The data come from the RNA Mapping Database (RMDB), library OK3TST. This 207-nucleotide RNA was probed chemically with 2A3. For 2A3 the reverse transcriptase was SuperScript II with manganese. Reactivities are given for positions 27 through 156. The RNA was probed in 150 mM KOAc, 10 mM MgCl2 and 150 mM bicine (pH 8.5) at 24 C.
RNA sequence: GGGAACGACUCGAGUAGAGUCGAAAAAUAUCUCGUAACCAUCACACGUGCACUUGAGCGUGCGAUUCACUACUGGGUUGAUGCCGCUGAACUCGCAGUCCAGGUUCACUCUGGUCUUCAACCAGAACAUACGAGAAUUUGAACGUGAGUGAGUUUAGUUGGCAGAUGAAUUCGUUCAUCUGCCAACAAAAGAAACAACAACAACAAC
Reactivity to 2A3 in 0.01 (KOAc 150mM, MgCl2 10mM, bicine 150mM(pH8.5), 24C), signal-to-noise 2, nucleotides 027 to 156: a000u170a210u000c000u000c000g080u010a160a170c010c050a070u040c010a030c020a000c060g030u030g020c100a060c200u180u280g020a030g030c050g050u070g000c000g000a030u070u050c110a050c190u150a030c010u060g050g000g190u030u040g000a050u100g000c050c000g070c060u050g000a040a000c010u040c140g090c050a060g070u070c050c030a020g000g000u000u000c010a030c050u050c060u120g000g050u070c100u080u030c030a000a000c000c000a000g040a040a050c040a030u050a010c000g010a000g010a010a030u080u030u130g090a080a050c080g050u050g060a040g030u050g030a070g030u080u060u090a010